[RMDB]
An RNA of 177 nucleotides, treated with 2A3 and DMS and read out base by base.
RNA sequence: GGGAACGACUCGAGUAGAGUCGAAAAAUCUCCUUCACAGGAGCUGACAUCUGCGGCUUCCAGAAUUUGGCGACGGAGGAACUGUGCGCGCGAUGGAUUGCAGUGGGCGCCUGGCAGCCGCUGGCGCUCACCAAGGGUGUUUCGACACCCUUGGUGAAAAAGAAACAACAACAACAAC
Reactivity to 2A3 in 0.01 (KOAc 150mM, MgCl2 10mM, bicine 150mM(pH8.5), 24C), signal-to-noise 3, nucleotides 027 to 126: a000u050c030u030c020c010u150u150c090a060c030a090g020g030a030g050c060u040g050a090c020a080u060c070u070g030c010g010g000c010u100u040c040c020a060g050a290a240u180u190u210g060g000c020g020a030c030g100g110a070g040g060a100a050c030u080g040u080g130c040g000c010g000c020g080a050u110g070g040a090u130u230g070c020a010g020u080g010g070g010c010g000c030c000u010g020g050c010a030g070c040c070g000c020u010g020g030c020g020c030
Reactivity to DMS in 0.01 (KOAc 150mM, MgCl2 10mM, bicine 150mM(pH8.5), 24C), signal-to-noise 5, nucleotides 027 to 126: a080u010c030u000c000c010u010u010c210a140c200a130g000g010a040g010c180u000g000a110c080a070u010c040u010g020c020g010g010c020u010u000c020c030a080g010a130a120u010u010u010g000g010c050g030a100c080g010g010a110g000g000a110a070c030u000g020u000g020c070g010c020g030c040g010a110u010g010g010a120u000u010g020c040a040g020u000g010g000g010c010g010c020c000u000g010g010c050a090g020c060c060g010c020u000g000g010c060g010c060
Conditions: 150 mM KOAc, 10 mM MgCl2 and 150 mM bicine (pH 8.5), 24 C. The 2A3 profile rests on 2,356 reads. The DMS profile rests on 5,394 reads. For 2A3 the reverse transcriptase was SuperScript II with manganese.